The data come from the RNA Mapping Database (RMDB), library OK2TST. Structure probing data (DMS and 2A3) for a 177-nucleotide construct. For DMS, 1,302 sequencing reads were counted. 2A3 is a SHAPE reagent: it acylates the 2'-hydroxyl of flexible nucleotides of all four kinds. For 2A3 the reverse transcriptase was SuperScript II with manganese.
RNA sequence: GGGAACGACUCGAGUAGAGUCGAAAAGGAUUGCAAGUUCAAAGAUGGCCUCAGCAAUGGCGAGGCACUAAGCAACUCAGUGAGACCCUGUCUCUAAUGUCUCUAAAUAAAAUACAAAAUAGGGCUGCAUCCGCUUAGAAUUCGUUCUAAGCGGAUGAAAAGAAACAACAACAACAAC
Reactivity to DMS in 0.01 (KOAc 150mM, MgCl2 10mM, bicine 150mM(pH8.5), 24C), signal-to-noise 2, nucleotides 027 to 126: g020g010a130u000u000g020c080a080a070g000u000u000c070a050a110a080g000a130u010g000g010c020c000u000c030a140g060c080a080a140u010g000g030c080g000a020g010g000c020a020c060u000a080a090g020c050a030a020c050u000c120a060g010u010g010a100g020a080c050c040c080u000g000u000c030u000c040u000a090a100u000g000u000c000u010c040u000a010a080a180u000a020a030a080a100u000a090c080a040a020a060a140u000a050g000g010g000c170u000g000
Reactivity to 2A3 in 0.01 (KOAc 150mM, MgCl2 10mM, bicine 150mM(pH8.5), 24C), signal-to-noise 2, nucleotides 027 to 126: g010g020a050u070u050g000c050a060a040g040u000u090c030a060a160a150g080a180u100g170g040c000c000u030c030a040g000c060a130a300u230g150g030c000g010a000g000g000c000a000c030u040a000a050g010c020a000a020c000u010c050a020g020u030g080a010g050a100c030c000c030u050g060u040c010u000c020u040a150a160u120g050u030c020u040c010u110a050a100a060u210a070a140a040a010u200a040c030a020a130a020a010u060a060g080g000g020c020u050g000